The record gives the reactivity of an RNA of 177 nucleotides to 2A3 and DMS. Reactivities are given for positions 27 through 126. The data come from the RNA Mapping Database (RMDB), library OK2TST. For DMS the reverse transcriptase was MarathonRT. The RNA was probed in 150 mM KOAc, 10 mM MgCl2 and 150 mM bicine (pH 8.5) at 24 C.

[RMDB]
RNA sequence: GGGAACGACUCGAGUAGAGUCGAAAAGUCGCGGGACCUGGACGAGGCGAUGAGCACCCGGUCCGCUCGAAUUGUCGUUGUGUCGAGCCGCGCGGCGGCCGGUGUGUAUACCGAUGAUUGCGGGCCGCUAAGCGGCCAACUUCGGUUGGCCGCUUAGAAAAGAAACAACAACAACAAC
Reactivity to 2A3 in 0.01 (KOAc 150mM, MgCl2 10mM, bicine 150mM(pH8.5), 24C), signal-to-noise 2, nucleotides 027 to 126: g030u010c020g010c020g020g050g050a080c010c060u060g060g040a050c030g060a120g050g080c020g040a050u070g040a020g040c040a040c000c000c000g000g000u030c030c010g000c020u030c020g090a050a050u040u030g010u010c030g030u030u150g070u010g020u100c020g020a040g020c000c010g040c000g010c060g190g000c020g020g020c020c000g030g020u060g020u030g000u010a070u100a160c020c010g000a020u030g010a010u020u040g020c010g020g000g000c010c020g010
Reactivity to DMS in 0.01 (KOAc 150mM, MgCl2 10mM, bicine 150mM(pH8.5), 24C), signal-to-noise 3, nucleotides 027 to 126: g010u010c040g010c050g010g000g000a090c060c040u000g020g000a080c080g010a140g010g000c050g010a070u010g000a150g000c110a120c040c040c010g000g000u000c010c020g020c020u010c130g010a070a060u000u000g020u000c020g030u000u000g000u000g010u000c020g010a130g010c020c030g000c080g020c130g010g010c070g010g010c020c010g020g000u000g010u010g000u010a070u000a100c080c010g010a040u000g000a060u000u000g020c020g000g010g020c000c030g000